This 177-nucleotide RNA was probed chemically with 2A3 and DMS. Reactivities are given for positions 27 through 126. As a SHAPE reagent, 2A3 marks flexible, mostly unpaired nucleotides at the ribose 2'-OH.
RNA sequence: GGGAACGACUCGAGUAGAGUCGAAAAGAGCAGGCACGUGUUAGCGCGCUACAUCAAGAUGCAGUUAUUGGUGCUGUUGUGCGGUGGUCUGGUCGGGCCGAUCUUCUUGGUCGUCUACUUCACGCUCCAUACUAUGCCGAUUCGUCGGCAUAGUAUGAAAAGAAACAACAACAACAAC
Reactivity to 2A3 in 0.01 (KOAc 150mM, MgCl2 10mM, bicine 150mM(pH8.5), 24C), signal-to-noise 7, nucleotides 027 to 126: g040a010g020c050a030g030g020c020a010c110g110u150g080u250u170a040g010c010g000c000g000c030u050a030c000a040u060c030a030a030g050a120u130g090c060a020g110u130u110a100u120u120g050g010u030g000c020u040g020u280u160g020u040g020c040g040g070u080g010g020u000c040u040g060g090u030c010g010g030g000c030c010g030a050u010c020u070u020c020u040u080g020g000u030c010g030u010c030u050a110c040u060u120c050a040c100g040c020u030c020
Reactivity to DMS in 0.01 (KOAc 150mM, MgCl2 10mM, bicine 150mM(pH8.5), 24C), signal-to-noise 9, nucleotides 027 to 126: g010a060g010c040a070g000g020c020a040c050g020u010g020u000u010a110g020c030g020c040g000c020u000a090c060a040u000c060a050a040g000a120u000g020c120a080g000u000u000a140u000u000g010g010u000g010c030u000g010u000u010g040u000g000c040g010g020u000g010g010u010c030u000g010g000u000c040g010g010g010c120c020g010a080u000c040u000u000c080u000u000g010g010u000c020g010u000c040u000a090c070u000u000c090a080c150g010c090u000c060